[RMDB]
RNA sequence: GGGAACGACUCGAGUAGAGUCGAAAAUUAUAACCUCCUGCUGCUGCCCUUCCAGGGUGGGGCUGGGCUUCUUCCAACCCACUUUACCACCUGUCUUUGUUCAGGAAAGGCCAGAGUGUGCCAUUGCCUUGGAAAUGGCCUGUGUAAGAGGCUGAGACCAUUUAUCAUCAUUCGUGAUGAUAAAUGGAAAAGAAACAACAACAACAAC
Reactivity to DMS in 0.01 (KOAc 150mM, MgCl2 10mM, bicine 150mM(pH8.5), 24C), signal-to-noise 1, nucleotides 027 to 156: u000u020a120u000a070a160c040c010u010c030c040u010g040c000u000g030c040u000g020c010c030c050u000u000c040c040a210g000g000g030u010g010g000g000g030c060u020g020g020g030c110u000u000c130u000u010c110c060a100a080c000c010c010a070c030u000u000u000a130c010c040a080c010c000u010g020u010c080u000u000u000g000u020u000c070a210g040g000a040a030a050g040g030c030c060a040g010a090g030u010g050u000g020c050c030a060u000u010g020c020c080u000u000g030g000a030a060a050u000g020g010c000c040u000g030u000g020u000a060a090g010a050g030g060c020u010g020a140g020a200
Reactivity to 2A3 in 0.01 (KOAc 150mM, MgCl2 10mM, bicine 150mM(pH8.5), 24C), signal-to-noise 4, nucleotides 027 to 156: u190u100a100u050a230a040c000c010u030c000c000u020g020c010u040g060c020u030g010c030c000c000u080u010c030c060a020g010g000g000u020g020g020g020g010c030u040g010g010g010c030u130u050c020u130u040c110c030a040a060c030c030c000a030c020u060u080u110a070c020c020a040c010c000u030g070u090c080u070u160u150g130u110u120c040a040g010g000a130a070a040g050g000c020c040a020g020a050g100u080g040u080g020c020c000a060u040u130g040c010c020u010u130g060g000a020a050a020u090g020g030c010c040u060g020u010g000u020a030a040g020a010g050g030c060u070g050a050g050a060

The record gives the reactivity of an RNA of 207 nucleotides to DMS and 2A3. For 2A3 the reverse transcriptase was SuperScript II with manganese. For DMS the reverse transcriptase was MarathonRT. For 2A3, 2,369 sequencing reads were counted. The DMS profile rests on 3,486 reads. The reactions ran in a buffer of 150 mM KOAc, 10 mM MgCl2 and 150 mM bicine (pH 8.5), at 24 C.